[RMDB]
RNA sequence: GGGAACGACUCGAGUAGAGUCGAAAAGAUAUGGAGAUUCAUGUAUGGUGAUGACCUCGGAAACGAGCAAGCCAUGCAUGAGAUCUCCUAAGUCAAAUCGCUCAGGAGGUUCGCCUCCUGAGCGAAAGUUGGAUUUACAGUUCGCUGUAAAUCCAACAAAAGAAACAACAACAACAAC
Reactivity to 2A3 in 0.01 (KOAc 150mM, MgCl2 10mM, bicine 150mM(pH8.5), 24C), signal-to-noise 2, nucleotides 027 to 126: g020a010u080a050u160g000g000a000g010a000u000u020c020a010u010g000u010a010u000g000g030u060g080a300u210g080a150c030c030u000c040g030g010a100a100a040c000g000a000g040c000a120a000g000c030c000a000u010g000c020a000u000g030a010g000a000u010c000u010c000c000u010a080a000g020u010c000a000a020a210u030c000g000c000u010c010a000g010g020a020g010g080u140u110c220g180c020c010u000c000c000u000g010a010g000c000g020a000a000a010
Reactivity to DMS in 0.01 (KOAc 150mM, MgCl2 10mM, bicine 150mM(pH8.5), 24C), signal-to-noise 2, nucleotides 027 to 126: g000a040u020a300u000g000g000a010g000a020u000u010c010a020u000g010u000a010u000g000g000u000g000a160u010g020a110c300c010u000c000g000g000a100a140a150c000g020a000g010c010a070a230g000c010c000a010u000g000c010a000u000g010a020g020a010u000c000u000c000c000u000a000a060g010u000c020a060a120a100u000c000g010c010u010c000a020g000g000a030g010g020u000u010c210g010c000c010u000c000c000u000g000a000g000c000g010a000a000a060